[RMDB]
RNA sequence: GGGAACGACUCGAGUAGAGUCGAAAAGAAAGAAAGAACCGAGCUGGCGCAGCCGCACGGGCAACCGUCAAUCCAGCACUUCACAAGUCUUGUCGUUCUGACAGGACAUCCAUCAACCCACCGGGAAAAAAGGACUACAGCUUCGGCUGUAGUCCAAGGAAAUGGAUCAGUUCGCUGAUCCAUUUCCAAAAGAAACAACAACAACAAC
Reactivity to 2A3 in 0.01 (KOAc 150mM, MgCl2 10mM, bicine 150mM(pH8.5), 24C), signal-to-noise 1, nucleotides 027 to 156: g000a000a060a000g070a020a130a010g010a050a010c030c030g000a080g030c010u020g000g000c040g000c050a100g070c090c100g000c020a020c040g000g020g000c010a000a050c010c010g030u040c130a010a030u010c000c040a000g010c000a020c030u130u100c070a030c120a270a120g000u010c000u000u000g000u000c010g180u300u220c300u270g000a000c000a000g020g000a000c000a000u040c030c020a050u040c000a000a160c000c000c030a040c110c120g000g030g040a020a140a040a100a060a080g020g010a000c010u000a000c000a000g020c000u090u090c190g150g000c000u000g000u000a000g000u000c000c000a000a000
An RNA of 207 nucleotides, treated with 2A3 and read out base by base. 2A3 is a SHAPE reagent: it acylates the 2'-hydroxyl of flexible nucleotides of all four kinds. Conditions: 150 mM KOAc, 10 mM MgCl2 and 150 mM bicine (pH 8.5), 24 C. For 2A3 the reverse transcriptase was SuperScript II with manganese. The 2A3 profile rests on 428 reads.